[RMDB]
RNA sequence: GGGAACGACUCGAGUAGAGUCGAAAAGCGCGAGGUUAGUUGCCAGCCCGUGUUCUAAGUCGAAUUACUUUGCAAGCAAAGCGCUUUCGACAUUCCUCGCGUAUGCCUGGGCGGUACACGCCGCGGAGCGUCAUAAUGCUUUCGAGCAUUAUGACGCAAAAGAAACAACAACAACAAC
Reactivity to 2A3 in 0.01 (KOAc 150mM, MgCl2 10mM, bicine 150mM(pH8.5), 24C), signal-to-noise 2, nucleotides 027 to 126: g010c000g030c000g000a000g000g030u110u110a060g040u160u180g070c010c000a020g070c000c000c010g100u140g060u070u060c110u120a140a030g020u010c010g060a060a040u090u030a070c010u070u040u040g050c150a240a090g030c000a070a090a010g020c120g050c010u020u000u020c000g020a000c020a070u070u070c000c000u000c000g000c000g000u020a040u090g030c010c000u060g060g110g000c040g000g000u140a130c130a020c140g020c030c000g040c050g060g090a100
Reactivity to DMS in 0.01 (KOAc 150mM, MgCl2 10mM, bicine 150mM(pH8.5), 24C), signal-to-noise 2, nucleotides 027 to 126: g010c020g010c010g010a040g020g010u000u000a070g020u000u010g000c070c040a110g000c040c060c060g000u000g000u010u000c070u000a090a070g030u010c000g020a020a030u000u010a040c020u000u010u010g010c040a150a150g030c000a030a020a030g010c060g010c060u000u000u000c000g010a030c000a190u000u010c000c000u000c040g020c010g010u000a060u010g000c000c020u000g020g030g030c020g000g000u000a090c170a100c120g010c010c010g000c070g000g020a140